[RMDB]
RNA sequence: GGGAACGACUCGAGUAGAGUCGAAAAAGUGCAUACCAUCACUAAAACAUAGUUACUGUCUUUCUGUGGUCUUAAGAAAAAUUCAGAAACAGCAUACCAAUGUACAUAUAAGAUAAAUAAGCUUAUGUGGUACAGUAAGUGUUCUGUUCUGAGAAAACGCCUCAUUAGUCUUCGGACUAAUGAGGCGAAAAGAAACAACAACAACAAC
Reactivity to 2A3 in 0.01 (KOAc 150mM, MgCl2 10mM, bicine 150mM(pH8.5), 24C), signal-to-noise 1, nucleotides 027 to 156: a000g050u010g010c020a130u080a220c040c020a070u050c020a010c020u180a160a090a030a090c030a040u140a040g080u040u120a100c040u020g000u040c040u000u120u000c040u040g090u040g010g000u030c040u150u230a140a110g180a050a060a070a070a070u060u000c000a010g000a070a150a000c000a000g020c000a000u000a040c060c000a030a030u000g000u000a000c000a000u060a000u030a000a030g040a030u040a160a300a110u230a300a070g030c000u020u000a020u010g000u070g160g140u030a000c000a000g000u070a070a000g000u000g000u020u000c010u020g030u000u030c000u000g030a030g040a040a070a000a000